The record gives the reactivity of an RNA of 177 nucleotides to 2A3 and DMS. For DMS the reverse transcriptase was MarathonRT. In probing experiments dimethyl sulfate is read out at A N1 and C N3, which are open when not base-paired. Reactivities are given for positions 27 through 126. Conditions: 150 mM KOAc, 10 mM MgCl2 and 150 mM bicine (pH 8.5), 24 C.

RNA sequence: GGGAACGACUCGAGUAGAGUCGAAAAUACAUUCCGGCCGCGUGCCUACUGCUGGAAGGUGGAAGCCGCCCUAAACUCGUAGCUUUCCUAGGGCUUCUCACGGCGUUUUCACUGGGGUCUGCAGUCGACAAUGUAUGGCAUUCGUGCCAUACAUUGUAAAAGAAACAACAACAACAAC
Reactivity to 2A3 in 0.01 (KOAc 150mM, MgCl2 10mM, bicine 150mM(pH8.5), 24C), signal-to-noise 2, nucleotides 027 to 126: u060a010c030a040u040u020c010c000g020g010c050c030g140c060g090u170g030c000c020u040a070c030u060g050c010u050g030g060a060a060g070g030u020g000g020a030a010g040c030c010g040c020c010c000u090a110a130a030c040u040c120g070u050a000g040c010u050u080u040c020c030u060a030g000g090g000c050u070u050c000u020c020a050c010g050g020c010g020u030u000u020u010c030a040c040u040g010g010g000g070u020c020u050g030c020a020g050u020c030g010
Reactivity to DMS in 0.01 (KOAc 150mM, MgCl2 10mM, bicine 150mM(pH8.5), 24C), signal-to-noise 4, nucleotides 027 to 126: u000a090c130a260u010u010c030c030g010g020c010c040g020c120g020u010g010c030c020u000a060c050u010g000c030u000g010g010a110a110g020g010u000g010g010a070a070g010c060c040g000c030c020c030u000a030a070a120c130u000c060g010u000a090g000c070u010u010u000c050c060u010a110g010g000g010c080u010u000c060u010c080a140c130g000g010c030g020u000u000u030u000c040a050c040u000g020g000g020g000u000c030u010g000c030a040g010u000c110g000